RNA sequence: GGGAACGACUCGAGUAGAGUCGAAAACCCGGUGUAAGCGUAGAGGAUGCAUGCCAGUGGGGUAGUAGUGCAAAUCCACAGGGGAACUGGGCCCCAUUUGUAGCUGGUUCCAACAUGGACGACAACCGACGAUCAUAUACUUCGGUAUAUGAUCGUCAAAAGAAACAACAACAACAAC
Reactivity to DMS in 0.01 (KOAc 150mM, MgCl2 10mM, bicine 150mM(pH8.5), 24C), signal-to-noise 4, nucleotides 027 to 126: c000c010c000g000g000u010g000u020a060a120g040c010g010u030a060g000a180g000g000a070u000g010c120a080u020g010c050c030a080g020u010g000g000g000g020u000a030g010u010a050g000u000g000c110a060a150a090u020c040c030a070c140a140g000g030g000g010a100a060c060u010g000g020g000c000c020c030c010a050u010u020u010g010u040a070g000c050u010g020g010u000u000c000c010a030a160c110a100u010g000g000a040c060g000a080c080a070a140c140c050
Reactivity to 2A3 in 0.01 (KOAc 150mM, MgCl2 10mM, bicine 150mM(pH8.5), 24C), signal-to-noise 8, nucleotides 027 to 126: c000c000c010g010g020u080g000u040a120a080g030c040g010u020a020g010a030g100g010a030u080g080c060a030u080g030c030c030a040g020u020g030g030g020g000u050a100g090u040a020g030u060g060c060a070a080a100u060c030c010a070c060a120g070g020g000g020a020a050c050u060g030g070g020c000c000c000c010a040u100u060u090g060u020a040g020c030u030g070g000u050u020c020c010a030a020c040a120u090g030g030a040c020g020a040c020a060a050c020c040

The record gives the reactivity of an RNA of 177 nucleotides to DMS and 2A3. The reactions ran in a buffer of 150 mM KOAc, 10 mM MgCl2 and 150 mM bicine (pH 8.5), at 24 C. High 2A3 reactivity points to a flexible backbone, as in loops and unpaired stretches.